The data come from the RNA Mapping Database (RMDB), library M2PK90. This 177-nucleotide RNA was probed chemically with DMS and 2A3. The 2A3 profile rests on 1,747 reads. DMS adducts were read by reverse transcription with MarathonRT.

RNA sequence: GGGAACGACUCGAGUAGAGUCGAAAAGUUGCCGACGAACCUUCCAACCUUCCAAACGUCGUUUUCGACAACCUUCCAUCCUUCCAAUCUACUCGAGAGGAGGAGGAGGAGGAGGAGGAGGAAUUAAUCCUUCCAACAAAUUCGUUUGUUGGAAGGAAAAAGAAACAACAACAACAAC
Reactivity to DMS in 0.01 (KOAc 150mM, MgCl2 10mM, bicine 150mM(pH8.5), 24C), signal-to-noise 3, nucleotides 027 to 126: g000u000u000g020c040c040g000a050c130g020a110a100c060c000u000u000c010c020a090a080c020c020u000u000c030c070a050a080a140c180g000u000c020g010u000u000u000u000c020g010a070c040a120a130c060c020u000u000c030c020a130u000c020c020u010u000c010c050a110a170u000c010u010a050c060u000c050g000a020g010a220g000g010a160g000g020a140g010g010a090g020g020a160g000g010a080g000g020a180g000g020a140g010g000a300a050u000u000a090a130
Reactivity to 2A3 in 0.01 (KOAc 150mM, MgCl2 10mM, bicine 150mM(pH8.5), 24C), signal-to-noise 1, nucleotides 027 to 126: g070u020u090g130c030c010g010a080c030g020a070a100c010c020u050u000c010c020a050a050c030c010u050u060c040c000a100a100a060c070g010u020c020g000u050u060u040u130c000g040a030c000a060a030c000c020u070u000c020c010a200u030c000c020u100u000c020c010a070a050u000c000u020a070c010u020c040g040a030g000a030g000g060a060g020g010a030g030g020a060g000g000a090g000g060a020g000g020a040g020g040a010g000g000a050a050u040u080a110a020
The DMS profile rests on 2,000 reads. For 2A3 the reverse transcriptase was SuperScript II with manganese.